[RMDB]
Chemical mapping of a 177-nucleotide RNA with DMS and 2A3.

RNA sequence: GGGAACGACUCGAGUAGAGUCGAAAAGGAGCAGCAACGGCAAGCAAAAAAAAAGUUCCAGCCGAGGCCUCCUCACCACGCGGCCUGGGUCUGAGGGUAACAUGGCCCUGCGGGAGAGAGCCAACACGGGUGUAUUAGCUUUCGAGCUAAUACACCCAAAAGAAACAACAACAACAAC
Reactivity to DMS in 0.01 (KOAc 150mM, MgCl2 10mM, bicine 150mM(pH8.5), 24C), signal-to-noise 2, nucleotides 027 to 126: g030g010a040g000c090a160g000c030a050a090c110g010g010c000a190a080g000c040a000a000a000a070a070a000a050a050a080g000u020u010c080c140a090g050c000c000g030a060g010g000c020c010u010c020c020u040c060a150c000c000a130c180g060c060g000g010c100c010u010g000g000g000u020c050u030g000a050g000g020g020u050a090a050c190a090u000g000g020c000c000c020u010g020c020g000g040g000a130g000a050g030a070g100c000c020a000a140c280a050c170
Reactivity to 2A3 in 0.01 (KOAc 150mM, MgCl2 10mM, bicine 150mM(pH8.5), 24C), signal-to-noise 1, nucleotides 027 to 126: g040g000a000g030c080a000g000c020a020a040c000g050g000c000a000a010g030c070a010a040a000a000a000a000a000a220a000g070u060u010c090c020a000g020c000c000g020a030g000g000c010c000u010c000c010u000c000a100c040c000a040c010g040c030g000g000c000c030u050g070g000g030u040c000u040g040a110g040g010g060u080a140a030c020a080u170g040g010c000c000c050u050g020c020g000g000g000a010g000a000g000a000g030c000c000a010a030c030a000c060
Record summary: It was measured as part of the RMDB library RFM100. Reactivities are rounded to 0.1 and cut off at 0 and 3.